RNA sequence: GGGAACGACUCGAGUAGAGUCGAAAACGUCGUGAACUAGCGACAAUGCCGUAGAUCAAUCGUUAUCUAACCGAAACAUCGUGACUAGUCGUAGAAUAGAACCAGGAGUGGUCGCUGCCAAACAAAGACGGGGUCUAAGAUUCGUCUUAGGCCCCGUAAAAGAAACAACAACAACAAC
Reactivity to 2A3 in 0.01 (KOAc 150mM, MgCl2 10mM, bicine 150mM(pH8.5), 24C), signal-to-noise 4, nucleotides 027 to 126: c030g000u000c020g030u030g070a170a060c070u030a110g010c000g010a010c040a010a020u110g010c010c020g020u020a010g030a060u020c040a000a020u060c070g030u060u040a060u060c050u020a040a050c020c060g030a030a020a040c040a050u080c020g080u030g080a070c020u030a020g060u010c040g010u030a010g020a130a060u060a050g020a040a010c030c030a030g060g030a020g100u050g010g020u010c020g000c040u030g000c000c000a090a140a090c040a070a170a000g120
Reactivity to DMS in 0.01 (KOAc 150mM, MgCl2 10mM, bicine 150mM(pH8.5), 24C), signal-to-noise 6, nucleotides 027 to 126: c120g010u020c030g010u000g000a130a100c140u020a110g010c060g010a040c030a070a060u020g000c020c020g010u040a060g010a060u000c070a080a080u030c120g010u040u010a080u030c080u010a110a120c090c010g010a070a100a120c120a050u000c060g000u000g010a040c030u000a050g010u010c030g020u010a050g000a080a070u020a060g000a080a070c070c030a070g010g010a080g010u000g000g000u000c030g000c010u000g000c000c040a070a120a110c160a050a070a090g000